[RMDB]
RNA sequence: GGGAACGACUCGAGUAGAGUCGAAAAGAUAUGGAACUUGACGGACUGUCGUACUGCGACAUGCUGAUAAUCGGAAACGAUUAAUAGCAACAGCGCAGGUACGACAGUCCGUCAAGUUCCUAAGUCACACAAUGAACUUCUUCGGAAGUUCAUUGUGAAAAGAAACAACAACAACAAC
Reactivity to DMS in 0.01 (KOAc 150mM, MgCl2 10mM, bicine 150mM(pH8.5), 24C), signal-to-noise 1, nucleotides 027 to 126: g000a000u020a300u030g020g000a000a000c010u010u000g000a010c000g000g000a020c000u000g040u010c000g000u000a030c000u010g000c010g000a060c150a220u000g000c030u020g000a100u000a010a010u000c000g020g000a150a130a270c000g000a010u010u000a000a100u000a040g000c000a040a050c250a210g000c020g000c000a020g000g040u010a000c000g000a000c000a020g000u000c000c030g000u000c000a000a000g050u000u000c000c000u000a010a040g000u010c040a210